[RMDB]
An RNA of 177 nucleotides, treated with DMS and 2A3 and read out base by base. The data come from the RNA Mapping Database (RMDB), library M2PK90. Values cover nucleotides 27 to 126. The reactions ran in a buffer of 150 mM KOAc, 10 mM MgCl2 and 150 mM bicine (pH 8.5), at 24 C. The 2A3 profile rests on 1,234 reads.
RNA sequence: GGGAACGACUCGAGUAGAGUCGAAAAAAAGUGUACGAAAGAACAAAGAAGCUAUCAAACCGAGUAGUGAAAUGAUGGCUUCAGUCCAAAAUGGGCAAACACUACAGACGGAGCCAAAGGCAAUUAAAGUCUACAAUGAGUUCGCUCAUUGUAGACUAAAAGAAACAACAACAACAAC
Reactivity to DMS in 0.01 (KOAc 150mM, MgCl2 10mM, bicine 150mM(pH8.5), 24C), signal-to-noise 2, nucleotides 027 to 126: a030a070a060g020u000g010u000a060c180g010a080a070a060g010a070a110c120a060a080a030g000a020a010g000c010u000a000u000c000a060a040a190c050c010g000a170g010u000a080g010u010g000a050a040a120u010g000a010u020g000g000c000u000u000c000a080g000u000c040c050a010a040a080a090u000g010g020g030c060a070a010a090c050a000c000u000a040c100a080g000a100c090g000g000a070g000c000c000a010a070a090g030g050c090a100a090u000u000a040a180
Reactivity to 2A3 in 0.01 (KOAc 150mM, MgCl2 10mM, bicine 150mM(pH8.5), 24C), signal-to-noise 1, nucleotides 027 to 126: a000a000a000g040u080g010u000a010c030g070a160a060a060g050a130a030c030a020a080a120g000a000a000g000c000u000a010u000c000a070a000a000c040c020g060a030g090u240a010g000u120g090a020a110a100u070g010a010u010g000g000c000u040u000c010a000g030u000c000c010a050a160a050a210u120g000g000g000c010a030a080a010c000a000c020u050a040c010a030g040a070c010g060g000a040g000c000c000a130a000a000g050g000c020a010a010u180u060a210a040